[RMDB]
RNA sequence: GGGAACGACUCGAGUAGAGUCGAAAACUCACCAUAUGCACUCCCAUCAACAUCUUCAUCAAUAGCUCGACGGAUGGAAAGUAUGCUGUGACCGUGGAUGCCGAUCCAGCUGUGAGGAAGGCCCUGCUAUCAAGGUUCUGUUCGCAGAACCUUGAUAAAAAGAAACAACAACAACAAC
Reactivity to 2A3 in 0.01 (KOAc 150mM, MgCl2 10mM, bicine 150mM(pH8.5), 24C), signal-to-noise 1, nucleotides 027 to 126: c010u020c020a040c000c020a070u090a030u210g010c020a010c050u020c030c000c000a000u050c030a000a110c010a040u000c000u130u130c030a050u000c000a070a210u060a100g000c040u020c040g080a060c000g040g000a000u060g000g120a070a020a060g090u100a050u150g060c040u030g050u130g100a080c010c010g030u050g070g020a100u130g110c000c040g000a060u020c010c000a010g000c020u070g050u070g000a020g050g120a010a070g070g000c000c010c000u060g010c010
Reactivity to DMS in 0.01 (KOAc 150mM, MgCl2 10mM, bicine 150mM(pH8.5), 24C), signal-to-noise 2, nucleotides 027 to 126: c070u010c030a190c070c080a130u000a060u010g020c080a060c080u020c050c000c020a130u000c160a070a110c080a040u010c010u000u000c020a000u000c040a050a090u010a080g010c110u010c110g020a070c080g020g000a020u000g020g000a060a070a100g000u000a060u010g020c030u010g040u010g000a050c070c030g020u000g000g000a120u020g010c200c050g020a140u010c010c020a030g040c030u000g030u000g010a060g020g010a080a050g000g010c010c020c020u000g000c140

Chemical mapping of a 177-nucleotide RNA with 2A3 and DMS.
2A3 adducts were read by reverse transcription with SuperScript II with manganese.
The 2A3 profile rests on 1,060 reads.